[RMDB]
RNA sequence: GGGAACGACUCGAGUAGAGUCGAAAAGCGACGACGUUCGCGUCGUCGCAAAAUAACGCAGGCGUGGGACAACGCCAGAGAUAAACUCAAAUAGUGCCAAUAAAAUCUCACGGUUCGCCGUGAGAAAGUUAACAAAACAGUUCGCUGUUUUGUUAACAAAAGAAACAACAACAACAAC
Reactivity to DMS in 0.01 (KOAc 150mM, MgCl2 10mM, bicine 150mM(pH8.5), 24C), signal-to-noise 4, nucleotides 027 to 126: g020c000g020a020c000g020a010c000g050u000u020c200g020c000g010u000c000g010u000c000g020c020a000a010a070a060u010a100a110c160g020c150a080g000g000c020g020u020g000g010g020a150c030a080a060c010g000c000c010a050g010a060g020a180u000a080a110a100c040u000c010a030a050a050u000a060g010u000g010c030c030a120a100u010a050a060a090a090u000c000u000c000a010c000g010g010u000u010c250g010c000c000g000u000g000a000g000a010a020a050
Reactivity to 2A3 in 0.01 (KOAc 150mM, MgCl2 10mM, bicine 150mM(pH8.5), 24C), signal-to-noise 5, nucleotides 027 to 126: g020c000g020a000c000g000a000c010g010u050u140c210g000c010g080u010c000g000u010c000g020c010a010a000a000a000u020a010a010c050g040c070a040g010g000c010g020u050g050g040g040a060c020a070a010c100g010c000c000a000g000a000g000a030u220a110a210a110c010u040c060a040a010a030u110a040g120u070g070c010c010a040a020u140a120a120a010a070u030c010u000c000a000c000g000g040u040u040c200g030c050c000g000u000g000a000g010a000a000a000
This 177-nucleotide RNA was probed chemically with DMS and 2A3. Reactivities are given for positions 27 through 126. The DMS profile rests on 4,103 reads. DMS (dimethyl sulfate) methylates the pairing face of unpaired adenines and cytosines.